The record gives the reactivity of an RNA of 177 nucleotides to DMS and 2A3. The reactions ran in a buffer of 150 mM KOAc, 10 mM MgCl2 and 150 mM bicine (pH 8.5), at 24 C. 2A3 adducts were read by reverse transcription with SuperScript II with manganese. It was measured as part of the RMDB library OK2TST. For 2A3, 1,427 sequencing reads were counted.
RNA sequence: GGGAACGACUCGAGUAGAGUCGAAAAGCGUGCUGACGUAUCGCAGCGAGCCAUCGUGUGACACGCUCGUGCUGGCGGCGGCGGGGGUCGGAGUAGGACAUGGGAAUCUCCGGCAGUCGGGUGGGCCAAAGACCUAGCUAUUCGUAGCUAGGUCUUUAAAAGAAACAACAACAACAAC
Reactivity to DMS in 0.01 (KOAc 150mM, MgCl2 10mM, bicine 150mM(pH8.5), 24C), signal-to-noise 2, nucleotides 027 to 126: g000c050g020u010g010c080u030g030a080c060g030u010a040u010c080g030c020a120g020c060g020a120g010c090c140a060u000c090g000u000g020u000g010a050c030a040c070g000c080u000c040g010u000g020c060u000g010g020c050g020g000c100g000g000c090g000g000g000g010g010u000c020g000g000a050g020u000a060g010g000a140c110a090u000g030g000g010a200a200u000c010u000c000c010g010g000c030a060g020u000c090g020g000g000u010g000g010g000c050c080
Reactivity to 2A3 in 0.01 (KOAc 150mM, MgCl2 10mM, bicine 150mM(pH8.5), 24C), signal-to-noise 2, nucleotides 027 to 126: g050c020g000u050g050c070u040g080a100c050g010u080a050u160c020g000c020a030g240c010g030a040g020c050c010a150u040c030g000u050g040u090g150a030c010a000c070g010c070u000c010g020u030g020c040u020g040g060c050g000g020c040g030g040c160g000g000g000g000g000u000c010g000g000a010g010u070a000g020g070a050c060a220u170g090g030g120a020a090u000c010u000c020c040g020g000c020a010g060u080c030g000g000g140u140g020g020g000c000c040